[RMDB]
RNA sequence: GGGAACGACUCGAGUAGAGUCGAAAAGAUAUGGACGGUAUACAGCAACAGCGUCAGGGUCGGAAACGACCCGACGACAUGCUGUACCGUCCUAAGUCAAAUCGACCCGAGUUCGCUCGGGUCGAAAGUACAACGGACGGUUCGCCGUCCGUUGUACAAAAGAAACAACAACAACAAC
Reactivity to 2A3 in 0.01 (KOAc 150mM, MgCl2 10mM, bicine 150mM(pH8.5), 24C), signal-to-noise 1, nucleotides 027 to 126: g000a020u010a010u060g000g020a010c000g090g030u240a130u040a300c020a050g040c110a170a230c050a300g020c000g010u020c150a300g000g050g000u000c000g050g020a010a020a030c010g020a010c000c010c040g000a000c000g010a010c000a100u300g010c010u000g000u010a000c010c020g000u000c000c000u000a020a000g000u020c000a000a010a170u050c010g020a000c000c010c010g010a010g010u160u140c200g070c050u000c000g000g060g000u010c000g000a000a020a000
Source: RMDB library TTRDES, as collected in RNAgym. An RNA of 177 nucleotides, treated with 2A3 and read out base by base. The RNA was probed in 150 mM KOAc, 10 mM MgCl2 and 150 mM bicine (pH 8.5) at 24 C.